RNA sequence: GGGAACGACUCGAGUAGAGUCGAAAAUCAUCAUUGUCAAGACAAUAUCAAGGCUUUAUUUUUUUUUCAAAAUUUCAUUGCAAAUAACAGCAAAUACAAUAAAGGUUUCAACAGUAUGUAUAUGGAAAUAGAUAGCAACUUACCUUUUCUCUGCUUCUAUUUGGUCUGAUUUCGAUCAGACCAAAUAAAAAGAAACAACAACAACAAC
Reactivity to 2A3 in 0.01 (KOAc 150mM, MgCl2 10mM, bicine 150mM(pH8.5), 24C), signal-to-noise 1, nucleotides 027 to 156: u150c000a000u100c000a080u090u090g040u070c010a020a090g060a080c080a060a120u160a080u260c080a120a000g030g000c020u070u050u040a120u060u050u040u000u000u020u000u070u140c260a240a220a040a090u240u130u140c240a100u170u060g000c000a050a040a050u100a210a200c020a000g010c020a020a260a000u020a100c080a100a000u080a150a150a030g040g070u020u290u200c080a040a040c020a000g010u000a010u100g000u020a080u000a040u220g100g100a120a100a020u100a100g140a040u020a000g000c000a000a020c000u040u110a050c000c040u070u000u000u000c100u010c000u050g020c020u000u000c040